[RMDB]
RNA sequence: GGGAACGACUCGAGUAGAGUCGAAAAUGCCAGGUGGGCAGGCUCAAGGGACACUUUCCUGAGGAAGGGCAUUUCCAAACUCAGCCGCCCCACUCACCUGAGCCGUCUCAAGGGCGUGCUGCACCUGUGUCUAAGUAACCUUCGGGUUACUUAGACAAAAAGAAACAACAACAACAAC
Reactivity to DMS in 0.01 (KOAc 150mM, MgCl2 10mM, bicine 150mM(pH8.5), 24C), signal-to-noise 3, nucleotides 027 to 126: u020g040c160c000a030g020g040u000g020g010g010c040a040g020g000c030u000c020a050a300g000g010g000a010c060a120c050u000u010u010c060c100u000g010a040g000g010a150a200g010g000g000c060a150u000u010u000c080c120a090a100a090c110u020c070a060g010c120c130g000c010c000c000c010a250c020u000c010a020c020c130u020g000a010g010c050c060g000u010c010u010c040a080a300g000g010g000c000g000u010g000c020u000g020c020a020c000c000u010g010
Reactivity to 2A3 in 0.01 (KOAc 150mM, MgCl2 10mM, bicine 150mM(pH8.5), 24C), signal-to-noise 2, nucleotides 027 to 126: u230g020c040c010a000g060g010u020g000g000g000c030a030g150g010c000u000c020a040a080g030g020g000a000c000a000c070u080u080u100c020c040u050g020a010g040g000a040a050g030g010g000c000a060u130u100u040c110c040a080a070a070c100u130c100a090g080c100c070g020c000c000c010c000a000c010u000c000a010c000c040u060g040a030g030c130c090g050u020c000u000c000a020a050g000g000g040c140g080u020g030c000u120g030c000a000c000c000u010g040